[RMDB]
RNA sequence: GGGAACGACUCGAGUAGAGUCGAAAACUUUCGGGACACUUAUUCCUUUGCUUAAGACCAACUCUGUUUUCGCCUUUGCCCCUUCAUCAUUAUACAAAAUGUCUACCAUUACCACACCCACACAUUGUGUGAAAUAAACCUUCGGGUUUAUUUCACAAAAAGAAACAACAACAACAAC
Reactivity to DMS in 0.01 (KOAc 150mM, MgCl2 10mM, bicine 150mM(pH8.5), 24C), signal-to-noise 4, nucleotides 027 to 126: c080u000u030u000c080g040g000g020a070c040a040c040u020u010a060u000u000c020c030u000u030u040g000c040u010u000a070a060g000a050c030c020a070a160c040u010c070u000g020u020u000u000u020c030g010c030c040u010u020u010g000c040c000c010c010u010u010c060a050u010c070a080u010u000a060u030a080c120a040a050a080a070u010g010u010c040u010a080c030c030a050u000u020a070c020c050a040c070a080c010c000c000a050c140a030c120a070u010u020g020
Reactivity to 2A3 in 0.01 (KOAc 150mM, MgCl2 10mM, bicine 150mM(pH8.5), 24C), signal-to-noise 8, nucleotides 027 to 126: c020u050u100u110c070g030g000g030a020c000a010c030u020u030a030u070u060c020c000u070u090u240g030c010u030u050a040a020g050a030c000c010a030a060c030u040c050u070g100u070u030u040u050c050g040c000c000u060u040u080g010c010c010c010c010u080u020c010a080u020c010a040u030u100a070u050a160c080a040a110a030a020u070g020u000c010u020a040c010c000a020u030u060a030c000c020a030c010a030c030c010c000a030c000a010c020a080u080u110g080